Structure probing data (DMS and 2A3) for a 177-nucleotide construct.
Source: RMDB library RFMREP, as collected in RNAgym.
The RNA was probed in 150 mM KOAc, 10 mM MgCl2 and 150 mM bicine (pH 8.5) at 24 C.
For DMS, 612 sequencing reads were counted.
For 2A3, 759 sequencing reads were counted.
RNA sequence: GGGAACGACUCGAGUAGAGUCGAAAAAUCCGGGGAUAUCCGAAUGGGGUAACCUGAUCGAGGCAAUACUCGAUCGUUCAUACCUGAAUACAUAGGGUAUGAAACGCGAAACCCGCUGAAGUGAAACCGCUACUAAUCAGUUCGCUGAUUAGUAGCGAAAAGAAACAACAACAACAAC
Reactivity to DMS in 0.01 (KOAc 150mM, MgCl2 10mM, bicine 150mM(pH8.5), 24C), signal-to-noise 1, nucleotides 027 to 126: a160u000c040c020g040g020g000g000a160u000a050u000c020c030g020a190a120u010g000g000g050g000u000a010a080c020c050u000g000a010u000c000g000a030g000g120c010a040a040u010a200c010u000c000g040a030u000c000g000u000u000c000a010u000a000c010c000u000g010a170a170u000a080c140a020u000a300g000g000g050u000a010u000g000a000a000a050c060g030c110g000a030a060a110c020c000c010g030c110u000g030a100a070g020u000g030a100a300a110c220
Reactivity to 2A3 in 0.01 (KOAc 150mM, MgCl2 10mM, bicine 150mM(pH8.5), 24C), signal-to-noise 1, nucleotides 027 to 126: a020u030c010c030g000g060g000g000a080u010a020u020c040c010g120a200a300u190g070g000g000g020u000a060a010c000c010u030g000a000u010c010g000a010g040g030c080a140a020u050a120c000u020c000g030a030u000c000g000u000u010c000a010u010a000c000c010u060g000a050a020u150a100c050a030u030a000g000g000g070u020a010u000g030a020a050a010c050g030c060g010a060a010a040c020c030c000g000c120u170g060a200a090g080u020g080a090a070a050c060